Record summary: Chemical mapping of a 207-nucleotide RNA with 2A3. Reactivities are rounded to 0.1 and cut off at 0 and 3. As a SHAPE reagent, 2A3 marks flexible, mostly unpaired nucleotides at the ribose 2'-OH. For 2A3, 531 sequencing reads were counted. The reactions ran in a buffer of 150 mM KOAc, 10 mM MgCl2 and 150 mM bicine (pH 8.5), at 24 C.

RNA sequence: GGGAACGACUCGAGUAGAGUCGAAAACGUUGUCAUCGACAACACCCUAUGCAUUCAUGCUCUGUAAGGAUGCGACGAAAGGUGAGCAAGCCCGAGUUGCCCAGACCUGAAAUGCAACACUUUAGAGAAAACCCGAAGCAGUUCGCUGCUUCGGGAACAUUGACGUCAACUUCGGUUGACGUCAAUGAAAAGAAACAACAACAACAAC
Reactivity to 2A3 in 0.01 (KOAc 150mM, MgCl2 10mM, bicine 150mM(pH8.5), 24C), signal-to-noise 1, nucleotides 027 to 156: c110g000u000u000g000u010c080a290u270c300g000a000c000a000a000c000a080c000c000c000u040a130u160g000c020a000u000u020c000a000u040g020c040u040c010u030g080u120a110a030g150g050a110u060g000c000g000a000c000g110a110a000a040g000g000u070g100a110g130c250a120a030g000c020c010c000g030a020g000u000u020g010c000c010c000a020g030a010c000c000u010g060a000a000a090u020g000c000a040a020c040a040c050u090u170u170a090g000a010g010a050a160a060a130c100c030c030g030a000a000g000c020a000g000u000u120c130g080c160u000g030c000u000u000c000g000g000g000a000a000